[RMDB]
RNA sequence: GGGAACGACUCGAGUAGAGUCGAAAACUUUCAAAGCAACGCGUGUAUGUAAUCAAAACUUUGGCCAAAUUCAUGGGCAUCAAACAUUCUGGCAAUGUGAUUCGGUGUCGGCUAAAGAAUUUGUAUAAAGACUUUGUUUUUAUUCUGCGCAGAGCAAUGACACACUUCUUUUCGAAGAAGUGUGUCAAAAAGAAACAACAACAACAAC
Reactivity to DMS in 0.01 (KOAc 150mM, MgCl2 10mM, bicine 150mM(pH8.5), 24C), signal-to-noise 1, nucleotides 027 to 156: c090u000u010u020c050a090a090a300g010c000a090a090c020g020c060g020u000g010u010a020u000g010u040a030a070u010c050a020a020a020a080c000u010u010u000g010g010c060c010a050a100a050u020u000c030a090u000g050g010g060c000a020u000c000a180a110a040c010a050u000u000c060u000g030g080c160a020a020u000g000u020g000a130u000u020c080g060g010u010g000u000c020g050g000c170u010a050a110a200g030a090a070u020u000u000g000u020a140u000a080a050a130g000a080c020u000u000u000g010u010u000u000u000u000a050u070u000c080u000g020c000g020c020a090g000a200g000c050a070a270
Reactivity to 2A3 in 0.01 (KOAc 150mM, MgCl2 10mM, bicine 150mM(pH8.5), 24C), signal-to-noise 2, nucleotides 027 to 156: c010u080u190u050c040a040a020a060g000c000a020a020c060g010c000g050u040g040u020a120u170g060u080a040a080u030c040a020a010a000a050c010u090u020u040g010g000c010c000a010a030a110u050u060c050a060u140g040g010g000c000a010u000c000a010a080a020c000a000u000u030c020u170g230g000c100a000a030u020g030u030g070a230u040u210c090g040g010u030g000u050c080g040g110c050u220a140a040a060g000a000a040u030u010u000g040u020a060u020a130a030a040g010a100c020u080u020u030g040u000u040u010u000u040a040u040u030c020u050g000c010g020c030a020g000a010g020c010a030a070